Conditions: 150 mM KOAc, 10 mM MgCl2 and 150 mM bicine (pH 8.5), 24 C.
Chemical mapping of a 177-nucleotide RNA with 2A3.
Reactivities are given for positions 27 through 126.
For 2A3, 1,140 sequencing reads were counted.
2A3 adducts were read by reverse transcription with SuperScript II with manganese.

RNA sequence: GGGAACGACUCGAGUAGAGUCGAAAAUGCCUCUUCUAUUGAAAAAACUCCUGUAACUGUGGCAAGUACUGCAACCUUAAAUGCUACUACUCCAGCAGCAUCAUUUAAUAAAGAUUCACCUUCAAGUCAUAUCCAGCCAGUUCGCUGGCUGGAUAUGAAAAGAAACAACAACAACAAC
Reactivity to 2A3 in 0.01 (KOAc 150mM, MgCl2 10mM, bicine 150mM(pH8.5), 24C), signal-to-noise 3, nucleotides 027 to 126: u060g040c000c020u050c030u110u030c010u010a230u190u190g130a050a020a020a030a090a070c070u040c060c000u020g030u110a050a070c020u010g000u010g030g010c040a050a050g020u050a040c020u020g030c030a060a070c000c040u110u180a090a160a020u070g020c000u000a020c000u010a020c040u020c030c040a020g060c000a000g050c000a070u030c040a100u100u030u210a200a170u120a020a080a020g010a070u070u080c030a060c030c000u070u170c060a020a080g000u010